[RMDB]
RNA sequence: GGGAACGACUCGAGUAGAGUCGAAAAGUUAUAACUUCUUCAUGGAUAAAGCAUACUCUCAUAUCGGCUUAAGCCGGUGGCAUGGGUACGUUUAAACAUGUGUAGAGUGCAAAGGUUCCUUAAAAAACGUUAUUGUUUGGUUCGCCAAACAAUAACGAAAAGAAACAACAACAACAAC
Reactivity to DMS in 0.01 (KOAc 150mM, MgCl2 10mM, bicine 150mM(pH8.5), 24C), signal-to-noise 2, nucleotides 027 to 126: g010u010u010a120u040a140a090c020u000u000c030u000u020c010a000u000g020g020a110u020a050a080a030g020c000a070u000a010c010u000c000u000c170a300u040a010u010c000g020g030c000u000u000a070a150g030c040c000g010g000u000g000g000c270a080u000g000g020g020u000a000c040g020u000u000u000a040a090a110c020a000u000g000u000g030u010a050g020a050g030u000g000c170a090a060a060g000g000u000u010c000c010u020u020a000a100a070a110a050a120
Reactivity to 2A3 in 0.01 (KOAc 150mM, MgCl2 10mM, bicine 150mM(pH8.5), 24C), signal-to-noise 1, nucleotides 027 to 126: g030u060u110a170u060a300a000c010u080u040c000u130u060c050a030u010g040g020a040u040a140a040a000g020c020a010u020a020c000u030c020u010c030a060u010a040u090c010g000g010c020u210u110a150a020g000c040c010g050g000u010g020g010c090a090u090g000g000g020u000a020c020g040u010u000u010a070a040a010c000a000u000g040u010g010u060a000g030a040g050u070g060c130a080a020a040g040g020u030u030c020c000u080u090a090a160a000a000a020a000
The record gives the reactivity of an RNA of 177 nucleotides to DMS and 2A3. Source: RMDB library RFMREP, as collected in RNAgym. For DMS the reverse transcriptase was MarathonRT.